[RMDB]
RNA sequence: GGGAACGACUCGAGUAGAGUCGAAAAGCGCAAAUCCACAAACGCCAACGAUGAGCGUUUCGCUGUAGCCGCUUAAGGCAACAGCCGGGGCCGCCUAAGCCCUGUUACCAAAGACGGCUGGCGGGGGUAAUUACUUAUUGCUUCGGCAAUAAGUAAAAGUAAAAUCUGUAUUCGUACAGAUUUUACUAAAAGAAACAACAACAACAAC
Reactivity to DMS in 0.01 (KOAc 150mM, MgCl2 10mM, bicine 150mM(pH8.5), 24C), signal-to-noise 2, nucleotides 027 to 156: g010c030g040c030a080a100a050u000c010c010a090c040a030a200a060c020g020c000c010a060a150c160g000a100u010g010a210g030c030g020u010u000u020c040g010c020u000g030u000a060g000c000c000g020c200u010u000a060a170g030g010c000a030a030c030a040g000c040c050g000g000g010g020c020c050g000c140c040u000a100a080g010c000c000c000u020g010u000u000a080c020c040a070a150a200g000a080c120g010g000c020u000g020g040c010g020g010g000g020g010u000a100a130u000u000a010c010u000u000a010u000u010g040c000u000u000c300g030g000c010a000a000u000a000a010g010u010a000a010a060
Reactivity to 2A3 in 0.01 (KOAc 150mM, MgCl2 10mM, bicine 150mM(pH8.5), 24C), signal-to-noise 3, nucleotides 027 to 156: g040c030g000c030a040a040a030u060c050c030a090c090a070a090a010c060g020c020c020a080a060c140g150a160u120g020a030g040c020g010u030u080u120c040g010c010u010g010u050a070g050c010c020g060c180u250u180a160a060g010g000c010a020a010c000a030g000c000c000g000g020g000g000c020c110g010c020c070u080a050a010g000c000c000c000u040g040u060u080a050c020c030a040a020a010g050a010c030g000g020c020u060g040g020c020g000g000g000g020g010u050a070a090u060u010a010c000u000u010a000u000u000g000c000u010u040c180g100g000c010a000a000u000a000a000g000u010a000a000a000
Chemical mapping of a 207-nucleotide RNA with DMS and 2A3. The reactions ran in a buffer of 150 mM KOAc, 10 mM MgCl2 and 150 mM bicine (pH 8.5), at 24 C. The 2A3 profile rests on 2,433 reads. For DMS, 3,653 sequencing reads were counted. The data come from the RNA Mapping Database (RMDB), library M2RFPK. For 2A3 the reverse transcriptase was SuperScript II with manganese.